[RMDB]
RNA sequence: GGGAACGACUCGAGUAGAGUCGAAAACGUGCGUACUGGGCCGCCGGCACAAUGUUCAACCCAGCCGUCUCAGAGGUCGCGGUUCGACCACGAUCAGCCAGCUGGUCAGCGGGGUCCUCCUAGCUAGGAUGAUUAUUUAGUUCGCUAAAUAAUCAUCAAAAGAAACAACAACAACAAC
Reactivity to 2A3 in 0.01 (KOAc 150mM, MgCl2 10mM, bicine 150mM(pH8.5), 24C), signal-to-noise 8, nucleotides 027 to 126: c020g020u050g020c020g060u110a080c040u050g020g000g000c010c040g040c020c010g050g000c040a030c020a090a160u200g040u170u120c040a030a080c010c010c010a010g000c010c010g070u040c040u010c060a050g030a060g100g040u070c010g000c030g050g000u040u070c070g040a070c010c020a010c050g020a040u030c000a000g070c050c020a050g050c040u010g010g030u030c020a020g040c040g020g020g000g010u030c000c000u000c010c010u030a070g020c030u050a060g190
Reactivity to DMS in 0.01 (KOAc 150mM, MgCl2 10mM, bicine 150mM(pH8.5), 24C), signal-to-noise 9, nucleotides 027 to 126: c090g030u000g010c070g020u010a080c050u000g000g000g020c060c080g010c050c040g010g010c050a070c090a080a080u010g010u010u010c140a100a130c100c010c010a110g010c040c030g000u000c030u000c090a080g010a140g000g010u000c020g020c050g010g010u000u010c110g000a080c010c010a070c060g000a030u000c030a090g000c070c100a120g010c030u000g000g010u000c040a080g020c050g010g000g010g010u000c030c040u000c020c020u000a070g020c120u000a110g010